RNA sequence: GGGAACGACUCGAGUAGAGUCGAAAAGGGGUCUACCGACGUCUUGGAUUUACAUAACUUUUGACGAGCUGAAGCCUCCACGGCUCGAUAAGUUAUGUUGUCAGACGAUCGGUAGACGGAGGCACCCAAAACUCUUGAAUCUUCGGAUUCAAGAGAAGAAAGGGUAACUCUUCGGAGUUACCCUUUCAAAAGAAACAACAACAACAAC
Reactivity to 2A3 in 0.01 (KOAc 150mM, MgCl2 10mM, bicine 150mM(pH8.5), 24C), signal-to-noise 1, nucleotides 027 to 156: g000g040g000g010u020c000u000a000c000c010g020a000c020g010u000c010u080u140g210g040a130u250u180u210a020c000a000u000a000a000c000u020u030u200u300g200a120c070g000a010g000c020u040g070a130a020g020c040c000u050c010c000a040c050g000g020c020u000c010g010a060u060a120a000g000u000u000a000u010g000u020u060g030u060c010a010g000a000c000g110a300u020c010g010g010u020a000g000a000c000g000g000a000g000g030c030a070c030c040c000a150a270a020a030c000u000c020u020u000g000a000a000u000c020u040u070c300g090g000a000u050u000c000a020a020g010a000g010a010a030
Annotation:
Chemical mapping of a 207-nucleotide RNA with 2A3. It was measured as part of the RMDB library RNAMAK. Conditions: 150 mM KOAc, 10 mM MgCl2 and 150 mM bicine (pH 8.5), 24 C. Values cover nucleotides 27 to 156.